This 177-nucleotide RNA was probed chemically with 2A3 and DMS. 2A3 adducts were read by reverse transcription with SuperScript II with manganese. The data come from the RNA Mapping Database (RMDB), library OK2TST. The DMS profile rests on 3,549 reads.

RNA sequence: GGGAACGACUCGAGUAGAGUCGAAAAUAUACAAUUAUGGACGCGCCAUUAUACUACCAAGUGGCAUUUCUGUUAAUGUUGUAAAAUACACACAGUUGUGCCAAUAUCUGAAUACAACAUCGCUCGCGCAAGUAACAGAAUUCGUUCUGUUACUUGCAAAAGAAACAACAACAACAAC
Reactivity to 2A3 in 0.01 (KOAc 150mM, MgCl2 10mM, bicine 150mM(pH8.5), 24C), signal-to-noise 3, nucleotides 027 to 126: u130a010u020a020c050a060a110u170u050a050u180g020g010a010c020g010c020g030c050c010a010u090u110a060u060a100c060u030a050c020c020a080a030g110u040g030g000c010a000u000u020u000c000u000g040u020u080a140a100u060g000u010u000g020u020a000a020a050a060u130a020c010a000c000a000c000a010g010u030u020g020u040g000c000c000a010a010u080a040u020c040u040g100a060a040u120a120c050a070a010c000a100u060c050g020c100u030c020g030c010
Reactivity to DMS in 0.01 (KOAc 150mM, MgCl2 10mM, bicine 150mM(pH8.5), 24C), signal-to-noise 4, nucleotides 027 to 126: u010a080u010a100c100a090a100u000u000a070u000g000g020a110c130g010c110g010c040c020a070u000u000a090u000a100c090u000a080c070c040a070a090g030u010g010g020c010a020u000u010u000c010u000g020u000u000a100a100u010g000u000u000g010u000a090a050a130a130u010a010c020a020c160a040c020a040g000u000u010g020u000g000c000c020a030a080u010a050u010c100u000g000a090a090u010a030c090a030a060c100a080u000c130g020c040u010c070g020c300